[RMDB]
RNA sequence: GGGAACGACUCGAGUAGAGUCGAAAACUACAAACAUUAUUCUCACUUGCUCCUCCUCUUAUGUUUUCUCUCAGGGAAUUCAUCUAGUUGCUCAUGUCAUAAACCUCUACACAACCAAUGAUUACCACAAUAGCUAACAAUUACUAACUCUGUGACAGGAGCAUUAGUGAUUCGUCACUAAUGCUCCAAAAGAAACAACAACAACAAC
Reactivity to 2A3 in 0.01 (KOAc 150mM, MgCl2 10mM, bicine 150mM(pH8.5), 24C), signal-to-noise 1, nucleotides 027 to 156: c080u180a060c130a060a090a010c020a160u140u090a110u220u100c030u010c010a050c050u090u150g030c000u020c000c000u010c000c000u000c050u050u080a070u150g010u000u000u000u000c020u000c000u000c000a010g000g020g050a000a110u060u000c010a000u030c060u050a050g050u120u030g000c040u060c020a020u070g040u060c000a020u170a190a130a180c010c000u020c000u050a070c050a000c000a020a120c030c020a010a010u110g040a040u010u070a040c000c000a020c030a070a150u040a020g000c020u020a040a050c050a040a040u120u040a020c030u090a200a050c030u050c030u100g060u120g030a030c060a150